[RMDB]
RNA sequence: GGGAACGACUCGAGUAGAGUCGAAAACUGACUGCAUACUCACACCAACUCAAGUAUGCAGGGCGGCGUGGCUCAGUGGGCAUGAGGAGGCGAUGAAUUUGUUUUGUGCUGUUGGGCCUCCUUUGGAAAAACACAUUGCUUUCGAGCAAUGUGUUUUAAAAGAAACAACAACAACAAC
Reactivity to 2A3 in 0.01 (KOAc 150mM, MgCl2 10mM, bicine 150mM(pH8.5), 24C), signal-to-noise 2, nucleotides 027 to 126: c000u020g060a000c000u010g000c010a010u000a020c010u010c080a110c030a030c070c040a060a060c020u040c090a020a000g000u000a000u000g040c030a000g020g000g000c040g000g010c000g050u140g020g000c040u010c040a030g030u100g030g020g000c010a030u090g010a020g010g010a010g000g090c110g070a060u130g080a090a230u160u080u170g200u090u110u040u060g080u090g010c030u020g000u040u020g010g020g000c010c000u000c000c020u020u030u070g060g010a060
Reactivity to DMS in 0.01 (KOAc 150mM, MgCl2 10mM, bicine 150mM(pH8.5), 24C), signal-to-noise 4, nucleotides 027 to 126: c030u000g000a150c030u000g000c020a010u020a000c000u000c120a150c190a210c150c100a080a070c160u030c190a130a030g000u000a000u000g010c010a010g000g010g050c050g000g010c120g000u000g000g010c050u000c050a080g010u010g000g020g000c050a080u000g000a030g000g000a030g000g000c020g030a120u050g010a060a090u020u040u010g010u020u010u010u010g010u010g020c040u000g000u000u000g010g010g020c000c010u000c010c000u010u000u010g000g000a080
This 177-nucleotide RNA was probed chemically with 2A3 and DMS. DMS (dimethyl sulfate) methylates the pairing face of unpaired adenines and cytosines. It was measured as part of the RMDB library OK1LIB. 2A3 adducts were read by reverse transcription with SuperScript II with manganese. The DMS profile rests on 9,402 reads. For 2A3, 983 sequencing reads were counted.